[RMDB]
This 177-nucleotide RNA was probed chemically with DMS and 2A3. For 2A3 the reverse transcriptase was SuperScript II with manganese. The RNA was probed in 150 mM KOAc, 10 mM MgCl2 and 150 mM bicine (pH 8.5) at 24 C. Source: RMDB library OK2TRN, as collected in RNAgym. For DMS the reverse transcriptase was MarathonRT.
RNA sequence: GGGAACGACUCGAGUAGAGUCGAAAACUAGCCUCCGCUUAUACGCGCGCUCACGGAGGCAGAUGCUCGAACAACAGCGCGCGGGCAUUCAGUUGAAGAGCCAAUACUCGCAGCCGUCCGGACGAGAGACAUCGGAUUCAUUCGUGGGUCUGGUGUCAAAAGAAACAACAACAACAAC
Reactivity to DMS in 0.01 (KOAc 150mM, MgCl2 10mM, bicine 150mM(pH8.5), 24C), signal-to-noise 9, nucleotides 027 to 126: c040u000a150g010c000c000u000c000c010g020c300u010u010a110u010a150c030g010c010g010c010g010c010u000c260a120c040g000g010a020g010g010c010a030g000a080u010g010c050u000c040g010a100a100c090a060a100c120a050g010c010g010c010g020c000g010g000g010c080a080u000u000c090a110g010u000u000g010a080a150g000a060g010c010c050a080a110u000a070c040u000c030g010c120a000g010c020c020g000u000c020c020g010g000a080c080g000a100g010a180
Reactivity to 2A3 in 0.01 (KOAc 150mM, MgCl2 10mM, bicine 150mM(pH8.5), 24C), signal-to-noise 9, nucleotides 027 to 126: c010u010a030g000c000c000u000c000c010g040c080u170u120a080u030a120c020g000c000g000c000g000c000u030c010a050c010g000g000a010g000g000c000a000g020a020u070g010c010u010c040g080a150a040c020a030a010c010a040g000c000g000c010g000c000g000g000g000c020a060u070u060c040a030g110u030u000g050a080a030g020a020g010c010c000a030a030u040a040c010u010c030g030c060a000g010c000c010g030u020c010c020g040g050a040c040g040a030g010a030